[RMDB]
RNA sequence: GGGAACGACUCGAGUAGAGUCGAAAAGUUAUGUGAUGACCUUGGGAUCAACAACAGGGUAGCAUCUGCAUAUAGAGGUCAUUGCAUGGUCAGGCUGAGUGGAUUCAAGAUCAAGCCAGCAUCAAGGAACAAUCGUUCCGUUCGCGGAACGAUUGUUAAAAGAAACAACAACAACAAC
Reactivity to DMS in 0.01 (KOAc 150mM, MgCl2 10mM, bicine 150mM(pH8.5), 24C), signal-to-noise 2, nucleotides 027 to 126: g000u030u000a010u000g080u000g010a010u010g010a000c010c000u030u000g010g020g040a140u000c130a080a150c130a110a110c010a030g000g020g030u000a170g000c170a090u040c010u000g000c070a050u030a090u000a170g000a030g000g000u000c000a010u010u000g000c020a000u000g010g030u000c090a110g000g060c030u000g000a060g010u000g000g000a130u010u000c150a080a100g010a080u010c060a040a130g000c030c000a040g100c030a120u020c140a100a190g010g000
Reactivity to 2A3 in 0.01 (KOAc 150mM, MgCl2 10mM, bicine 150mM(pH8.5), 24C), signal-to-noise 1, nucleotides 027 to 126: g010u000u080a010u000g000u010g000a020u020g010a030c000c000u000u010g190g010g120a110u250c070a030a140c020a010a050c010a000g040g000g010u030a040g050c030a090u050c000u000g030c070a030u120a020u110a300g010a010g000g010u010c000a010u050u000g020c000a000u040g000g040u150c050a020g040g020c010u080g050a120g110u030g030g000a120u120u120c100a160a070g030a210u040c020a020a010g030c030c000a010g000c020a020u140c060a060a150g200g020
An RNA of 177 nucleotides, treated with DMS and 2A3 and read out base by base. It was measured as part of the RMDB library OK2TRN. The DMS profile rests on 1,178 reads. 2A3 adducts were read by reverse transcription with SuperScript II with manganese. For DMS the reverse transcriptase was MarathonRT. Values are in units of 0.01, from 0 to 300, in steps of 10.